[RMDB]
The record gives the reactivity of an RNA of 170 nucleotides to 2A3 and DMS.
The reactions ran in a buffer of 150 mM KOAc, 10 mM MgCl2 and 150 mM bicine (pH 8.5), at 24 C.
For 2A3, 72,925 sequencing reads were counted.
For 2A3 the reverse transcriptase was SuperScript II with manganese.
Source: RMDB library 15KLIB, as collected in RNAgym.
RNA sequence: GGGAACGACUCGAGUAGAGUCGAAAACUGCCUCUCCCUGUCGGUGAAUCCUCCCCUGAGAGGCCUCUUCCUAGGCCCGGAGUCUAUCUCCAUCUGGUCCGUCCGGGCCCUCUUCGCCGGGGGAGCCUAACGGGUAAGUUCGCUUACCCGAAAAGAAACAACAACAACAAC
Reactivity to 2A3 in 0.01 (KOAc 150mM, MgCl2 10mM, bicine 150mM(pH8.5), 24C), signal-to-noise 9, nucleotides 027 to 129: c070u120g060c010c010u030c000u000c010c000c000u020g080u080c020g010g010u040g030a080a110u240c010c010u060c000c020c010c020u050g050a070g020a050g100g000c020c000u070c020u080u040c020c040u050a060g000g000c010c010c010g010g000a020g020u030c070u160a140u070c040u030c030c020a100u040c110u130g010g010u020c030c020g080u030c020c020g020g000g000c000c000c000u020c010u040u030c010g000c000c000g000g000g000g000g000a000g000c000c000u050a100a030
Reactivity to DMS in 0.01 (KOAc 150mM, MgCl2 10mM, bicine 150mM(pH8.5), 24C), signal-to-noise 9, nucleotides 027 to 129: c150u050g010c060c020u000c020u010c000c000c020u000g000u030c010g050g000u000g030a050a070u100c070c040u010c000c020c020c030u010g020a060g000a100g020g040c020c010u000c000u030u040c040c070u010a130g000g000c020c010c060g010g010a060g020u030c120u020a100u060c000u040c040c060a110u020c100u040g000g010u040c030c120g010u050c060c100g000g030g040c020c000c000u020c040u000u020c010g020c050c030g000g040g030g000g000a000g000c120c030u000a090a150